[RMDB]
RNA sequence: GGGAACGACUCGAGUAGAGUCGAAAAGAUAUGGAAACCCAUGGGAGCAACAGCCAGGAUCGGAAACGAUCCUGGACAUGCUCAGUGGUGUUUCCUAAGUCAAAACUUGGUUGUUCGCAACCAAGAAGUAUCCAUUCUUGUUCGCAAGAAUGGAUACAAAAGAAACAACAACAACAAC
Reactivity to DMS in 0.01 (KOAc 150mM, MgCl2 10mM, bicine 150mM(pH8.5), 24C), signal-to-noise 4, nucleotides 027 to 126: g020a050u020a300u000g010g010a010a000a010c020c000c000a010u020g010g020g020a020g030c000a020a110c300a220g000c000c000a010g010g000a010u000c000g020g000a110a070a180c010g010a000u010c000c000u010g000g020a020c090a100u000g010c000u010c010a300g000u010g000g000u000g010u000u000u000c000c010u000a010a130g010u000c050a080a070a120a200c010u000u000g000g000u000u000g000u000u000c250g030c010a020a010c010c000a010a000g010a070a120
Reactivity to 2A3 in 0.01 (KOAc 150mM, MgCl2 10mM, bicine 150mM(pH8.5), 24C), signal-to-noise 4, nucleotides 027 to 126: g010a010u100a020u160g000g020a010a000a000c070c030c030a030u100g290g300g010a010g000c020a030a170c060a120g070c020c000a000g000g020a000u000c010g030g010a060a030a030c010g000a000u000c010c000u000g000g000a000c010a020u020g000c000u010c020a000g020u000g000g020u210g010u110u000u000c000c000u010a100a010g030u020c010a010a020a150a180c010u010u010g000g020u010u030g020u100u110c300g010c170a010a000c010c000a000a000g000a020a010